[RMDB]
RNA sequence: GGGAACGACUCGAGUAGAGUCGAAAACACCAGUGUCAGUGUCUUCGUCGUUAUCAUGGCGGCGGGGUAUCACGUCAUCCGUGAGUGACCAGCGGGUCCUGAUCUGACGUUUACGAUCGCGAUCUGGAUGUGAUAGUUAGUUCGCUAACUAUCACAUAAAAGAAACAACAACAACAAC
Reactivity to 2A3 in 0.01 (KOAc 150mM, MgCl2 10mM, bicine 150mM(pH8.5), 24C), signal-to-noise 9, nucleotides 027 to 126: c040a040c020c010a020g030u030g030u150c070a070g020u010g040u060c020u020u020c010g010u000c000g020u020u060a210u270c140a130u300g040g000c000g000g010c000g010g000g010g010u030a050u100c010a010c020g040u040c030a080u060c040c030g040u040g050a080g030u090g030a050c010c010a040g060c060g060g000g000u010c000c010u020g020a030u000c020u050g050a070c050g050u060u100u090a080c080g030a100u070c030g000c040g040a020u000c020u030g070g050
Reactivity to DMS in 0.01 (KOAc 150mM, MgCl2 10mM, bicine 150mM(pH8.5), 24C), signal-to-noise 9, nucleotides 027 to 126: c080a160c020c030a090g010u010g010u000c040a080g020u000g000u000c010u000u000c010g030u000c030g020u000u000a090u010c300a110u010g010g010c100g010g000c010g010g000g000g000u000a070u010c020a020c020g000u000c110a060u010c170c100g010u000g000a070g010u000g000a090c020c030a210g010c090g010g010g000u000c010c020u000g000a020u000c040u000g020a060c160g010u000u000u000a100c130g000a050u000c030g020c210g000a050u000c020u000g000g000
Source: RMDB library OK2TST, as collected in RNAgym. An RNA of 177 nucleotides, treated with 2A3 and DMS and read out base by base. Conditions: 150 mM KOAc, 10 mM MgCl2 and 150 mM bicine (pH 8.5), 24 C. For 2A3 the reverse transcriptase was SuperScript II with manganese. Values are in units of 0.01, from 0 to 300, in steps of 10.